[RMDB]
RNA sequence: GGGAACGACUCGAGUAGAGUCGAAAAGGGGUCCUGAAGAGGUUUGCUGGAGAAGUGUACUGAAGCCUCCACGGUACCUUCGUUGAAAGCAAACUACCCACCUUCAGGACGGAGGCACCCAAAUCGGUAAUGCUAUGUUCGCAUAGCAUUACCGAAAGCGAUUUAUUCUCUUCGGAGAAUAAAUCGCAAAAGAAACAACAACAACAAC
Reactivity to 2A3 in 0.01 (KOAc 150mM, MgCl2 10mM, bicine 150mM(pH8.5), 24C), signal-to-noise 1, nucleotides 027 to 156: g070g000g010g010u010c000c000u000g000a000a000g010a000g000g000u000u000u000g030c010u010g010g010a010g000a020a010g010u050g010u240a010c000u020g030a120a020g010c000c030u000c010c000a000c000g010g000u010a000c010c110u000u000c010g060u110u020g000a000a000a000g030c020a010a000a010c000u060a010c020c020c010a060c010c000u000u000c000a000g000g000a000c010g010g000a010g010g000c000a020c000c000c010a030a050a110u020c010g000g000u000a000a000u000g000c000u000a000u010g030u050u080c270g010c190a000u000a000g000c000a000u000u000a000c000c000g000a000a010a000

The record gives the reactivity of an RNA of 207 nucleotides to 2A3. As a SHAPE reagent, 2A3 marks flexible, mostly unpaired nucleotides at the ribose 2'-OH. Reactivities are given for positions 27 through 156. The 2A3 profile rests on 2,186 reads. It was measured as part of the RMDB library RNAMAK. For 2A3 the reverse transcriptase was SuperScript II with manganese.